[RMDB]
RNA sequence: GGGAACGACUCGAGUAGAGUCGAAAAUUCGAUCCGGACCGGCUCAUCUCGGCAAAGGGCGGCAGUCCUCAGUACUCUUACUCUUUCCUAUAAAGAGGAGACUGCUGGACUCGCCGCCCGAGCCCGACAACCGAGCGCUUCGGCGCUCGGAAAAGAAACAACAACAACAAC
Reactivity to DMS in 0.01 (KOAc 150mM, MgCl2 10mM, bicine 150mM(pH8.5), 24C), signal-to-noise 2, nucleotides 027 to 129: u070u020c020g020a090u080c020c050g020g100a080c080c090g000g040c040u000c000a040u040c040u060c080g000g040c050a080a300a010g060g000g000c000g070g000c300a010g020u030c010c010u060c010a070g000u000a200c000u000c040u030u000a210c070u000c000u000u000u000c060c130u000a100u150a010a000a000g000a090g050g060a030g050a030c000u000g000c220u010g010g010a000c010u000c080g000c000c000g030c040c020c000g010a090g000c070c000c000g000a060c150a060a000
Reactivity to 2A3 in 0.01 (KOAc 150mM, MgCl2 10mM, bicine 150mM(pH8.5), 24C), signal-to-noise 2, nucleotides 027 to 129: u080u010c030g020a080u080c000c000g070g020a030c000c000g050g000c000u000c020a020u000c000u000c060g000g000c040a120a020a010g010g000g000c000g010g010c010a000g000u000c020c000u050c010a020g000u100a300c000u000c010u070u120a260c020u000c000u000u070u080c020c080u170a220u290a280a050a000g000a020g030g000a000g000a000c020u000g000c030u000g000g020a000c000u000c020g010c020c020g000c000c000c000g000a000g000c000c000c000g000a000c070a070a020